[RMDB]
RNA sequence: GGGAACGACUCGAGUAGAGUCGAAAAGAUAUAGAUGGGUCUAAUAAUUCCCCAUUAGCUCCUCAAAUAGUUACUCCUAAUUUAUACUCAAAUGUUAAUCCACCUUUUAACAUGAAUAAUGGUAUACCUAUCAGGAUACUUUCGAGUAUCCUGAUAGAAAAGAAACAACAACAACAAC
Reactivity to 2A3 in 0.01 (KOAc 150mM, MgCl2 10mM, bicine 150mM(pH8.5), 24C), signal-to-noise 3, nucleotides 027 to 126: g010a020u060a020u050a080g040a030u070g040g030g020u020c030u020a020a040u050a130a200u130u070c030c000c000c000a010u010u020a000g010c030u010c000c000u010c050a070a110a040u080a040g060u070u090a040c020u070c010c000u040a120a150u120u190u050a060u020a020c030u040c090a060a120a060u030g000u020u030a030a010u030c090c010a140c080c000u000u040u040u020a020a000c010a010u020g070a100a010u190a070a050u090g000g050u060a030u060a060c060
Reactivity to DMS in 0.01 (KOAc 150mM, MgCl2 10mM, bicine 150mM(pH8.5), 24C), signal-to-noise 4, nucleotides 027 to 126: g010a070u000a070u000a130g010a090u000g000g000g010u000c020u000a030a040u000a090a180u000u000c020c000c000c200a100u000u000a030g010c030u000c010c010u010c050a060a090a100u000a040g010u000u000a090c120u000c020c010u010a060a080u020u010u000a010u000a040c020u000c120a040a090a020u010g000u000u000a010a030u010c110c060a100c100c060u000u000u000u000a010a020c010a000u000g010a100a110u010a060a080u000g010g000u000a020u000a050c300
The data come from the RNA Mapping Database (RMDB), library OK2TST. Chemical mapping of a 177-nucleotide RNA with 2A3 and DMS. The 2A3 profile rests on 2,519 reads. 2A3 adducts were read by reverse transcription with SuperScript II with manganese.